Annotation: Chemical mapping of a 177-nucleotide RNA with DMS and 2A3.
[RMDB]
RNA sequence: GGGAACGACUCGAGUAGAGUCGAAAAUUCUUUCAUGGGGAAGCAGAUUUGGGUACCACCCAAGUAUUGACUCACCCAUCAACAACCGUUAUGUAUUUCGUACAUUACUGCUAGCCACCAUGAAUAUUUUUAACCACCAUUUCGAUGGUGGUUAAAAAAAAGAAACAACAACAACAAC
Reactivity to DMS in 0.01 (KOAc 150mM, MgCl2 10mM, bicine 150mM(pH8.5), 24C), signal-to-noise 2, nucleotides 027 to 126: u050u060c020u010u000u010c000a000u010g000g020g020g010a090a030g000c010a000g010a180u030u000u030g000g020g020u040a160c300c130a090c010c010c010a020a090g050u000a110u030u010g000a050c080u000c200a080c020c010c000a280u000c060a010a090c140a070a070c150c110g000u000u000a070u010g000u000a070u030u030u010c160g000u000a020c030a040u030u020a060c030u000g000c000u000a070g000c010c000a040c020c000a040u000g010a030a030u050a040u000
Reactivity to 2A3 in 0.01 (KOAc 150mM, MgCl2 10mM, bicine 150mM(pH8.5), 24C), signal-to-noise 4, nucleotides 027 to 126: u080u010c010u020u040u040c000a010u010g000g000g000g000a010a000g000c030a020g010a170u070u050u010g060g000g010u110a160c010c050a040c010c050c010a010a000g060u060a100u060u070g010a030c000u020c070a140c010c000c000a030u050c000a000a050c020a010a080c030c070g060u090u060a020u050g050u010a060u040u190u160c100g010u020a020c010a030u070u090a020c010u010g000c030u020a060g120c010c010a200c010c000a020u010g010a010a000u050a100u030

2A3 adducts were read by reverse transcription with SuperScript II with manganese.
The 2A3 profile rests on 2,421 reads.
Conditions: 150 mM KOAc, 10 mM MgCl2 and 150 mM bicine (pH 8.5), 24 C.